[RMDB]
RNA sequence: GGGAACGACUCGAGUAGAGUCGAAAAUCCAAGCCUCAUGGGAGCAGUUAGAUCUGCAGGGUUAGUGCUCUGGCUACUGCACAGAAACGUAACCGGUAUAAUAGGAUAUGAAAAUGAGUUUAUAUGUAGCCUUACAACAGUUCGCUGUUGUAAGGCUAAAAGAAACAACAACAACAAC
Reactivity to 2A3 in 0.01 (KOAc 150mM, MgCl2 10mM, bicine 150mM(pH8.5), 24C), signal-to-noise 1, nucleotides 027 to 126: u040c000c000a010a000g080c060c000u080c040a080u120g110g040g000a060g000c000a010g020u000u110a000g000a160u060c000u000g060c000a020g000g120g000u000u300a000g000u020g060c020u030c000u080g000g000c000u080a000c030u060g070c080a180c000a160g050a050a040a000c000g040u110a000a040c000c060g000g000u240a220u030a080a210u000a000g000g230a000u060a000u100g090a050a000a000a000u000g000a000g040u050u260u120a090u000a000u130g010u000